[RMDB]
RNA sequence: GGGAACGACUCGAGUAGAGUCGAAAAGAUAUGGAGACCACAAAAGGCAACAGCACUCAAUCGGAAACGAUUGUAGUGACAUGCCUAGUGGUCUCCUAAGUCAAAGGGCUAGGUUCGCCUAGCCCAACACUACACAUAACUUCGGUUAUGUGUAGUGAAAAGAAACAACAACAACAAC
Reactivity to 2A3 in 0.01 (KOAc 150mM, MgCl2 10mM, bicine 150mM(pH8.5), 24C), signal-to-noise 9, nucleotides 027 to 126: g000a000u010a000u040g000g000a020g010a000c000c010a010c040a030a300a070a040g080g000c100a300a050c080a300g000c000a000c000u010c000a000a010u010c010g000g000a000a010a010c010g000a000u000u030g060u130a010g000u000g010a010c020a130u300g000c000c000u000a000g000u000g000g000u000c000u000c000c000u000a000a000g000u000c000a020a110a090g000g000g000c000u010a010g030g010u040u100c290g100c060c000u000a000g000c000c000c000a010a000
Reactivity to DMS in 0.01 (KOAc 150mM, MgCl2 10mM, bicine 150mM(pH8.5), 24C), signal-to-noise 7, nucleotides 027 to 126: g000a010u000a050u030g000g000a010g010a020c000c000a000c010a060a120a180a020g010g030c000a110a070c260a120g000c000a000c000u000c000a000a000u000c000g010g000a010a010a030c000g010a010u000u000g010u020a000g020u000g010a020c060a300u010g020c000c000u000a050g030u000g000g000u000c000u000c000c000u000a000a030g000u000c010a100a130a140g020g010g010c000u000a000g000g010u000u010c300g020c000c000u000a000g000c010c000c000a010a040
Conditions: 150 mM KOAc, 10 mM MgCl2 and 150 mM bicine (pH 8.5), 24 C. An RNA of 177 nucleotides, treated with 2A3 and DMS and read out base by base. 2A3 is a SHAPE reagent: it acylates the 2'-hydroxyl of flexible nucleotides of all four kinds. The DMS profile rests on 17,233 reads. The data come from the RNA Mapping Database (RMDB), library TTRDES.